[RMDB]
RNA sequence: GGGAACGACUCGAGUAGAGUCGAAAAGCGCAGCAGACCGCGGGCACUGCACUUGUGGUCAGUAUUGACUAAUAAAGUAAAUAUCAGCCGAGCAAAAAGGCAUCAUACGGCAAGGGUAGGUCCAAACACUAGGGGAGUACUUCGGUACUCCCCUAGUAAAAGAAACAACAACAACAAC
Reactivity to DMS in 0.01 (KOAc 150mM, MgCl2 10mM, bicine 150mM(pH8.5), 24C), signal-to-noise 1, nucleotides 027 to 126: g050c090g090c050a030g010c110a090g000a090c030c020g040c150g010g010g000c030a130c030u000g000c060a070c020u000u010g060u000g010g000u000c010a060g030u000a070u030u000g030a000c010u010a040a090u000a090a090a030g050u010a050a150a060u000a070u010c090a090g020c010c010g030a190g000c170a050a040a070a080a120g010g000c030a060u010c100a030u030a090c130g020g000c060a040a090g000g000g010u000a020g000g000u010c090c000a060a060a050c190
Annotation: Chemical mapping of a 177-nucleotide RNA with DMS. DMS adducts were read by reverse transcription with MarathonRT. For DMS, 765 sequencing reads were counted. Reactivities are given for positions 27 through 126.